[RMDB]
RNA sequence: GGGAACGACUCGAGUAGAGUCGAAAACUGUGGGAGGCCAAGAAGGGUGAAUAACUUGAGCUGAAGAUCAGCUUGGACCACAGAGCAAAACCCUGCCUCUACUAAAAAUACGAAAACUAGCUGGGUGUGCACAUCUGUAGUCCUGGCUACUUGGGAAGUGAUUUAUAGCUUUCGAGCUAUAAAUCACAAAAGAAACAACAACAACAAC
Reactivity to 2A3 in 0.01 (KOAc 150mM, MgCl2 10mM, bicine 150mM(pH8.5), 24C), signal-to-noise 1, nucleotides 027 to 156: c040u040g010u130g130g000g000a050g030g000c070c000a020a040g040a030a020g060g050g010u030g010a060a050u160a110a040c000u020u040g030a010g060c030u050g010a100a010g040a080u040c050a010g020c000u000u010g020g010a000c000c000a000c000a000g010a000g050c030a000a140a070a000c030c000c000u010g050c010c020u090c030u060a080c000u060a070a080a020a120a070u160a030c080g100a000a040a000a160c050u030a000g030c010u040g000g000g000u030g000u050g030c050a020c000a190u040c000u000g010u010a020g000u000c010c000u010g000g000c000u040a050c030u060u060g050g000g000a120a040
Structure probing data (2A3) for a 207-nucleotide construct. Conditions: 150 mM KOAc, 10 mM MgCl2 and 150 mM bicine (pH 8.5), 24 C. For 2A3, 742 sequencing reads were counted.